Structure probing data (2A3 and DMS) for a 207-nucleotide construct.
For 2A3 the reverse transcriptase was SuperScript II with manganese.
The 2A3 profile rests on 1,254 reads.
The DMS profile rests on 2,160 reads.
The reactions ran in a buffer of 150 mM KOAc, 10 mM MgCl2 and 150 mM bicine (pH 8.5), at 24 C.
For DMS the reverse transcriptase was MarathonRT.
RNA sequence: GGGAACGACUCGAGUAGAGUCGAAAAAACGGUAAUAAAUGGGGAGUAAUUUGCAAUGCUGGCUCUUGGGGUGGAUGGUACAGGAUAGCAAGAUCUGAUAAUCGAUUGAUGUUACUGCCUCCCGAUGUAGUAUCAACGUUUGGUGAUUACUCGAUCAAUCCUUUGGUUCAUUCGUGAACCAAAGGAUAAAAGAAACAACAACAACAAC
Reactivity to 2A3 in 0.01 (KOAc 150mM, MgCl2 10mM, bicine 150mM(pH8.5), 24C), signal-to-noise 3, nucleotides 027 to 156: a000a010c150g000g030u100a100a090u050a060a070a060u110g020g010g000g000a020g060u110a020a070u070u110u140g030c080a050a060u100g050c040u050g080g000c000u050c020u070u070g040g000g000g000u150g040g060a160u090g010g000u010a050c000a020g040g050a060u070a020g010c050a060a020g020a070u000c020u100g030a160u100a130a040u060c050g070a070u000u040g020a020u020g000u060u030a010c000u030g000c000c000u030c000c020c010g040a020u070g010u090a010g010u040a040u110c020a040a030c010g000u020u080u070g050g010u030g020a010u000u080a030c030u000c060g040a050u060c050a000
Reactivity to DMS in 0.01 (KOAc 150mM, MgCl2 10mM, bicine 150mM(pH8.5), 24C), signal-to-noise 1, nucleotides 027 to 156: a050a080c010g000g030u010a030a100u010a000a080a080u030g000g030g080g000a130g060u010a030a080u010u000u010g030c070a080a010u010g000c030u000g020g000c000u000c050u000u000g030g000g050g030u000g000g020a080u010g000g020u000a090c030a040g000g000a110u010a100g030c100a050a120g000a080u000c050u000g040a130u000a070a040u000c040g000a160u000u020g010a080u010g000u000u000a040c000u000g000c020c030u010c010c030c000g070a130u000g010u020a010g000u010a040u000c010a000a040c030g020u010u000u010g110g010u000g000a040u000u000a040c030u000c100g030a100u000c110a060